Structure probing data (2A3 and DMS) for a 177-nucleotide construct. High DMS reactivity at an A or C suggests that its Watson-Crick edge is free.
RNA sequence: GGGAACGACUCGAGUAGAGUCGAAAAGAUAUGGAUCAGUAAUCUCGCCACGGAGGUCGGAAACGACUACCCACCCGUGGAACUACGAGAUGCUGAUCCUAAGUCAAAACAGAGGUUCGCCUCUGAACCAAGUCUUCAAGUUCGCUUGAAGACUUGGAAAAGAAACAACAACAACAAC
Reactivity to 2A3 in 0.01 (KOAc 150mM, MgCl2 10mM, bicine 150mM(pH8.5), 24C), signal-to-noise 2, nucleotides 027 to 126: g030a000u090a030u180g000g020a000u020c010a000g000u050a300a300u010c010u000c000g000c010c010a000c010g000g000a030g050g000u020c030g000g050a080a070a040c020g030a020c020u060a060c050c090c000a040c000c000c000g000u000g000g030a010a040c060u200a040c030g000a000g000a020u000g000c000u000g000a000u030c000c000u000a020a030g040u000c020a010a000a120a190c010a000g000a020g040g000u090u140c210g120c050c000u000c000u000g000a020a030
Reactivity to DMS in 0.01 (KOAc 150mM, MgCl2 10mM, bicine 150mM(pH8.5), 24C), signal-to-noise 2, nucleotides 027 to 126: g000a100u000a300u010g060g020a010u000c000a000g000u010a110a090u000c010u000c000g000c000c000a000c000g000g000a080g050g000u000c000g000g000a090a110a210c000g000a010c000u000a040c030c070c080a300c110c010c000g020u010g000g020a020a070c090u000a300c000g000a010g010a010u000g000c020u000g000a000u000c000c010u000a020a030g020u000c050a060a040a100a110c030a020g000a010g000g030u000u000c290g000c010c000u000c000u010g000a060a230